[RMDB]
RNA sequence: GGGAACGACUCGAGUAGAGUCGAAAAGACGCCUGUGUGGCGAAGCGAGCAAUGGAAUAAGCCGCAAUAGAUGAUGAGAAGGAAGCGGCAAGAUGGAAUGCUCGCAAUGAGAUCCAUCUACCAGAGAAUAGUAGCGUCGUUUCGACGACGCUACUAUAAAAGAAACAACAACAACAAC
Reactivity to DMS in 0.01 (KOAc 150mM, MgCl2 10mM, bicine 150mM(pH8.5), 24C), signal-to-noise 2, nucleotides 027 to 126: g000a190c000g100c050c000u000g030u020g050u050g010g000c030g020a110a120g040c020g060a030g010c050a120a170u060g010g060a080a140u020a030a060g010c010c000g020c000a060a270u020a060g000a100u010g000a110u060g000a110g010a040a080g000g080a120a300g000c030g000g040c010a010a000g000a000u000g020g030a090a130u000g000c040u040c010g000c100a150a010u030g010a030g030a040u020c080c000a080u000c030u000a140c000c020a130g050a100g000a030
Reactivity to 2A3 in 0.01 (KOAc 150mM, MgCl2 10mM, bicine 150mM(pH8.5), 24C), signal-to-noise 1, nucleotides 027 to 126: g280a040c060g010c000c060u190g000u020g300u220g110g050c090g000a000a000g000c000g000a000g000c000a000a180u020g020g170a000a000u140a040a040g000c060c000g000c020a060a000u110a170g230a040u170g000a080u260g090a120g000a020a150g200g060a000a170g000c000g080g000c000a030a000g080a000u000g020g070a140a030u150g010c000u000c000g000c000a000a100u150g010a000g030a000u010c030c000a000u000c000u030a050c050c050a000g020a000g070a000

Chemical mapping of a 177-nucleotide RNA with DMS and 2A3. The 2A3 profile rests on 627 reads. The reactions ran in a buffer of 150 mM KOAc, 10 mM MgCl2 and 150 mM bicine (pH 8.5), at 24 C.